The data come from the RNA Mapping Database (RMDB), library OK2TST. Structure probing data (DMS and 2A3) for a 177-nucleotide construct. The DMS profile rests on 2,721 reads. The RNA was probed in 150 mM KOAc, 10 mM MgCl2 and 150 mM bicine (pH 8.5) at 24 C.
[RMDB]
RNA sequence: GGGAACGACUCGAGUAGAGUCGAAAAUGCCGCCAUUCUCGAAGAGCCGCCACGGAUGGGCAAUAGUGACCUGGGCGUGGCGUUUUCGCGCAAUCAACCAGCCUGGCAGCAACGUAGUCAGCAACUGGUCCACCUAGUAAUUCGUUACUAGGUGGACAAAAGAAACAACAACAACAAC
Reactivity to DMS in 0.01 (KOAc 150mM, MgCl2 10mM, bicine 150mM(pH8.5), 24C), signal-to-noise 3, nucleotides 027 to 126: u010g020c030c030g010c050c030a100u010u010c010u000c030g020a100a040g000a060g020c260c030g000c010c000a010c030g000g010a060u000g000g010g040c050a130a210u010a150g010u000g000a100c020c000u010g010g000g020c020g010u020g010g010c020g000u000u010u000u010c060g050c080g020c150a070a060u010c090a060a110c090c040a030g000c080c040u000g000g010c020a060g000c050a050a090c140g000u010a020g010u010c030a030g020c090a080a070c080u000g000
Reactivity to 2A3 in 0.01 (KOAc 150mM, MgCl2 10mM, bicine 150mM(pH8.5), 24C), signal-to-noise 3, nucleotides 027 to 126: u080g010c000c000g000c010c010a080u090u020c020u010c060g050a100a030g020a030g080c050c040g020c020c000a040c020g100g130a100u080g020g030g000c030a030a080u240a190g190u110g090a290c010c010u050g050g030g110c000g000u000g010g000c020g020u020u000u020u040c010g000c030g000c040a010a070u070c010a000a090c020c010a000g050c010c000u020g020g000c010a020g030c020a010a080c070g070u060a020g020u020c010a020g020c030a060a050c020u060g060